[RMDB]
The data come from the RNA Mapping Database (RMDB), library OK3TST.
This 207-nucleotide RNA was probed chemically with 2A3 and DMS.
DMS adducts were read by reverse transcription with MarathonRT.
2A3 adducts were read by reverse transcription with SuperScript II with manganese.
RNA sequence: GGGAACGACUCGAGUAGAGUCGAAAAUGAAGCAAGAGGCGGCGGAGGCAUACAUUCCCGCCAGCAAUGUGUUUAGGGAUAAUGAAGGAGAAGAAGCAGAGGGAUUGCGACACUUAAAGUAUGAGUCAGGCAGAAUGUUACGUAAGGACCAUCCUUCCCAUCGUAGGUAUUUCGAUACCUACGAUGGAAAAGAAACAACAACAACAAC
Reactivity to 2A3 in 0.01 (KOAc 150mM, MgCl2 10mM, bicine 150mM(pH8.5), 24C), signal-to-noise 3, nucleotides 027 to 156: u110g020a030a000g060c050a030a030g030a060g100g030c100g010g000c050g020g000a040g000g020c010a080u100a100c030a040u040u080c030c000c010g020c010c010a020g000c030a010a130u080g060u000g020u040u130u160a120g020g000g000a040u040a100a070u160g040a080a000g020g020a030g000a040a000g030a030a020g030c030a000g020a030g050g030g000a020u060u100g020c020g030a000c010a010c060u060u100a150a050a020g070u050a100u090g020a010g060u020c060a050g030g000c050a020g040a140a080u050g040u130u060a030c070g020u060a010a040g050g020a010c030c000a010u050c010c010u010u050c010
Reactivity to DMS in 0.01 (KOAc 150mM, MgCl2 10mM, bicine 150mM(pH8.5), 24C), signal-to-noise 1, nucleotides 027 to 156: u010g030a120a090g030c070a100a060g000a040g070g030c040g020g040c060g060g020a070g040g030c120a100u000a040c120a250u010u000c000c000c060g000c040c060a040g050c010a050a170u000g000u000g020u000u010u000a080g000g020g030a030u020a160a100u020g030a080a130g030g020a100g020a070a090g020a050a070g060c040a030g000a100g040g000g000a160u010u000g020c060g010a060c050a120c060u010u010a020a040a090g020u000a040u000g010a100g000u000c010a000g030g000c100a080g030a010a100u010g000u000u000a050c090g010u010a090a100g000g050a040c060c050a300u000c010c000u000u000c000